[RMDB]
Structure probing data (2A3 and DMS) for a 177-nucleotide construct.
For 2A3 the reverse transcriptase was SuperScript II with manganese.
The reactions ran in a buffer of 150 mM KOAc, 10 mM MgCl2 and 150 mM bicine (pH 8.5), at 24 C.
Values cover nucleotides 27 to 126.
For 2A3, 1,669 sequencing reads were counted.

RNA sequence: GGGAACGACUCGAGUAGAGUCGAAAAUGGUGAAGAAGAUGAGAUGGAAUGUCAACUUGUGGCUUGCCGAUGUCUGGCGCACUUGAUGGAAGCCUUGCCUGGUUGCGGGCAUGCCUUGGUCCAGAUAAAUCAGUCCUCAGUUCGCUGAGGACUGAUUAAAAGAAACAACAACAACAAC
Reactivity to 2A3 in 0.01 (KOAc 150mM, MgCl2 10mM, bicine 150mM(pH8.5), 24C), signal-to-noise 3, nucleotides 027 to 126: u150g020g050u090g010a030a020g010a020a000g030a080u080g090a030g020a050u100g020g090a060a080u110g090u060c020a020a080c070u110u060g050u060g040g040c040u040u070g010c000c000g050a050u110g050u040c040u020g000g000c000g020c020a080c120u070u140g040a020u070g110g020a010a080g000c000c010u070u180g060c020c000u150g140g000u210u090g100c020g050g030g000c020a010u140g000c010c000u050u050g020g000u000c020c000a010g000a050u130a000
Reactivity to DMS in 0.01 (KOAc 150mM, MgCl2 10mM, bicine 150mM(pH8.5), 24C), signal-to-noise 2, nucleotides 027 to 126: u020g000g020u040g000a040a050g010a030a060g010a040u030g000a020g030a110u010g000g000a120a070u000g000u010c060a030a090c050u020u010g000u020g010g040c040u000u020g010c110c060g000a110u020g020u030c050u000g010g040c160g000c100a090c080u050u010g000a100u010g010g010a050a090g010c050c060u000u020g010c010c000u000g000g000u010u030g020c050g000g000g050c000a030u030g000c080c020u000u000g010g000u000c000c020a030g000a110u020a030